[RMDB]
RNA sequence: GGGAACGACUCGAGUAGAGUCGAAAAGAUAUGGAGUGCUACUCAUUCGUAGGAGCUCCGAUAAGACGCUAUCGGAAACGAUAGGCGUCUUUUGACGGAGCUACGAAUGAGUAGCACUCCUAAGUCACCAUAUGGCGUACUUCGGUACGCCAUAUGGAAAAGAAACAACAACAACAAC
Reactivity to DMS in 0.01 (KOAc 150mM, MgCl2 10mM, bicine 150mM(pH8.5), 24C), signal-to-noise 1, nucleotides 027 to 126: g010a020u000a300u000g000g000a030g030u010g000c010u000a000c000u000c000a010u000u000c010g030u000a040g030g040a300g000c000u000c000c020g020a100u000a010a000g000a000c010g010c000u000a010u000c020g000g000a270a090a230c000g030a000u000a060g050g030c000g030u010c030u020u000u000u000g020a220c020g030g000a060g000c000u000a000c010g000a020a020u000g030a050g020u000a000g000c000a000c000u000c000c000u030a010a010g010u000c030a300

An RNA of 177 nucleotides, treated with DMS and read out base by base. Reactivities are given for positions 27 through 126. For DMS the reverse transcriptase was MarathonRT. The data come from the RNA Mapping Database (RMDB), library TTRINS.